RNA sequence: GGGAACGACUCGAGUAGAGUCGAAAAGUUCAGUCGUUCGCGACUGAACAAACUGUGAAGCGCGAAAACACAGAAAAGAAACGGCAACGCGCGUAUCGCCGAAAACCCUGCAGUUCGCUGCAGGGAAGGGUGUAUAACACUUCGGUGUUAUACACCCAAAAGAAACAACAACAACAAC
Reactivity to 2A3 in 0.01 (KOAc 150mM, MgCl2 10mM, bicine 150mM(pH8.5), 24C), signal-to-noise 2, nucleotides 027 to 126: g020u000u000c010a010g000u010c000g000u040u070c190g000c020g130a000c000u010g020a000a000c000a020a000a000c010u010g040u020g050a110a010g030c000g000c010g040a090a060a290a010c020a000c020a000g260a050a140a000a020g150a020a070a000c080g010g000c020a070a010c010g020c010g030c020g020u100a060u300c040g010c010c000g000a030a030a030a040c010c000c000u000g000c000a000g010u010u050c170g040c110u000g020c000a000g000g000g000a000a010
Reactivity to DMS in 0.01 (KOAc 150mM, MgCl2 10mM, bicine 150mM(pH8.5), 24C), signal-to-noise 1, nucleotides 027 to 126: g010u000u000c020a000g010u000c000g030u000u000c240g050c030g010a000c000u000g000a000a030c000a040a070a200c020u000g010u000g030a090a130g000c000g000c000g000a060a070a090a130c000a020c040a020g000a160a050a080a120g000a080a120a150c130g000g030c060a150a080c010g000c040g010c010g000u000a020u000c110g060c030c060g000a030a030a110a070c010c000c000u000g030c000a010g000u000u060c220g000c000u000g020c000a050g010g000g000a040a000
Structure probing data (2A3 and DMS) for a 177-nucleotide construct. The reactions ran in a buffer of 150 mM KOAc, 10 mM MgCl2 and 150 mM bicine (pH 8.5), at 24 C. The data come from the RNA Mapping Database (RMDB), library M2PK50. The 2A3 profile rests on 1,696 reads.